Chemical mapping of a 177-nucleotide RNA with 2A3 and DMS. The RNA was probed in 150 mM KOAc, 10 mM MgCl2 and 150 mM bicine (pH 8.5) at 24 C. As a SHAPE reagent, 2A3 marks flexible, mostly unpaired nucleotides at the ribose 2'-OH. For DMS the reverse transcriptase was MarathonRT.
RNA sequence: GGGAACGACUCGAGUAGAGUCGAAAAAAGGGGCAAAACAUCAGGAGUCCGAAUACUUUGGUUAUCGGCUACGUAAAAAAACAUUAGAAGGCCAACGUGGAGAAUUGAAUUGUUUUGGCGGUGGUUGAAAGAAGAAGCUAUUCGUAGCUUCUUCUUUAAAAGAAACAACAACAACAAC
Reactivity to 2A3 in 0.01 (KOAc 150mM, MgCl2 10mM, bicine 150mM(pH8.5), 24C), signal-to-noise 1, nucleotides 027 to 126: a010a010g120g030g000g000c100a170a130a010a050c010a110u100c020a010g030g010a000g040u040c080c000g010a030a050u080a110c000u090u180u260g080g000u050u070a020u060c000g000g050c020u020a030c040g040u140a110a050a000a000a000a000a000c050a040u060u110a040g030a170a000g070g000c020c040a020a030c060g040u050g000g070a020g040a050a030u060u060g020a110a050u150u040g020u060u050u000u000g060g030c030g020g000u050g000g000u000u110g050
Reactivity to DMS in 0.01 (KOAc 150mM, MgCl2 10mM, bicine 150mM(pH8.5), 24C), signal-to-noise 4, nucleotides 027 to 126: a080a070g000g010g010g010c080a060a080a090a060c060a070u020c090a110g010g000a110g010u000c020c010g020a060a270u010a030c040u010u000u010g020g020u000u000a150u000c040g010g000c020u010a050c090g010u010a000a000a050a070a060a030a070c110a080u010u000a120g010a100a160g000g000c030c020a010a040c110g020u010g000g010a070g010a080a090u010u000g010a090a080u010u010g010u000u000u010u020g000g020c060g010g010u000g000g000u010u010g000